[RMDB]
RNA sequence: GGGAACGACUCGAGUAGAGUCGAAAAGUAACUGACUUCGGUCAGUUACAAAUCAAGAAUUCCGUAUUCAGUCGGGAAAAACUGAACAAAAAUAAAAUAAAAAAACGUAGCGGUUCGCCGCUACGAACCAUUAUCUGUUGUUCGCAACAGAUAAUGGAAAAGAAACAACAACAACAAC
Reactivity to 2A3 in 0.01 (KOAc 150mM, MgCl2 10mM, bicine 150mM(pH8.5), 24C), signal-to-noise 2, nucleotides 027 to 126: g000u000a000a010c000u000g010a000c000u010u080c190g050g000u010c030a000g010u000u000a000c000a000a000a000u170c020a040a100g070a090a120u280u040c000c000g050u000a150u000u030c000a010g040u040c000g030g000g080a000a070a070a010a000c020u010g000a020a010c030a060a200a050a020a010u300a070a100a060a040u260a070a160a020a030a010a000a090c000g000u000a000g000c000g050g110u030u020c220g030c040c000g000c000u010a000c000g000a000a000